[RMDB]
RNA sequence: GGGAACGACUCGAGUAGAGUCGAAAACGGUGACGGUCGACGGCUUCACGCGCCGCUAUGGCGUCGAUCGCGCGCAGGCCGCGCGUAUCGGCGCGCUUGCCGCGCGCUUUUACGAUCAGCUCGACGAGCGGUACUGAUAGUUCGCUAUCAGUACCGCAAAAGAAACAACAACAACAAC
Reactivity to 2A3 in 0.01 (KOAc 150mM, MgCl2 10mM, bicine 150mM(pH8.5), 24C), signal-to-noise 1, nucleotides 027 to 126: c070g100g070u120g040a050c040g000g020u050c020g070a030c030g040g000c030u110u110c100a060c080g000c020g000c000c020g000c030u140a150u180g050g000c000g000u020c000g000a000u020c000g000c000g050c000g010c090a080g080g080c090c000g000c000g000c000g090u140a060u070c010g060g030c000g000c020g000c010u000u080g010c000c020g020c000g000c000g040c000u080u030u080u130a030c030g000a010u090c040a030g040c030u010c050g000a050c080g000a050
Reactivity to DMS in 0.01 (KOAc 150mM, MgCl2 10mM, bicine 150mM(pH8.5), 24C), signal-to-noise 2, nucleotides 027 to 126: c040g000g000u020g000a060c090g020g000u000c030g020a050c080g030g010c040u000u000c110a160c110g010c030g040c020c130g020c060u000a070u010g000g000c000g030u000c010g020a010u010c030g000c000g020c000g040c020a120g020g040c170c170g040c010g020c000g020u010a010u000c050g000g020c010g000c010g040c050u000u000g010c040c200g000c070g060c030g010c140u000u000u000u020a100c080g000a050u000c060a160g010c120u000c010g000a090c050g000a060

Source: RMDB library OK2TST, as collected in RNAgym. The record gives the reactivity of an RNA of 177 nucleotides to 2A3 and DMS. The 2A3 profile rests on 1,158 reads. The reactions ran in a buffer of 150 mM KOAc, 10 mM MgCl2 and 150 mM bicine (pH 8.5), at 24 C.